The data come from the RNA Mapping Database (RMDB), library RFMREP. The record gives the reactivity of an RNA of 177 nucleotides to 2A3 and DMS. The RNA was probed in 150 mM KOAc, 10 mM MgCl2 and 150 mM bicine (pH 8.5) at 24 C. For 2A3, 12,196 sequencing reads were counted.
RNA sequence: GGGAACGACUCGAGUAGAGUCGAAAAGAGCAGCUUGAGCCGGGCAUUCGCCCGGUCGAACCGUCGAAGUUCGUGGAAGCCGUAAUGGCAGGAAGCGAACGAACGUCGGAACAGGGAAACUCAAGUCGUUAUUAAGUAAGUUCGCUUACUUAAUAACAAAAGAAACAACAACAACAAC
Reactivity to 2A3 in 0.01 (KOAc 150mM, MgCl2 10mM, bicine 150mM(pH8.5), 24C), signal-to-noise 5, nucleotides 027 to 126: g040a010g050c080a000g010c010u010u010g010a010g000c000c010g000g020g000c050a080u300u300c200g000c000c000c000g000g000u000c000g000a020a010c000c000g010u000c000g020a050a000g010u000u000c000g010u020g010g020a040a010g010c000c010g040u220a140a220u290g010g000c020a020g090g090a020a000g010c000g000a000a000c000g000a130a020c010g010u010c010g000g020a030a020c050a060g060g020g050a040a030a010c010u000c000a010a010g020u000c020
Reactivity to DMS in 0.01 (KOAc 150mM, MgCl2 10mM, bicine 150mM(pH8.5), 24C), signal-to-noise 8, nucleotides 027 to 126: g010a170g020c140a150g010c010u000u000g000a050g010c000c000g000g010g030c000a290u000u000c270g010c000c000c000g010g000u000c010g000a050a140c010c010g000u000c010g020a110a300g000u000u000c000g010u000g000g000a290a160g010c000c010g010u010a090a080u010g000g020c000a020g000g000a300a200g000c000g000a000a000c010g010a070a110c020g020u000c010g010g000a050a130c100a220g010g000g000a060a040a170c020u000c000a030a020g010u000c120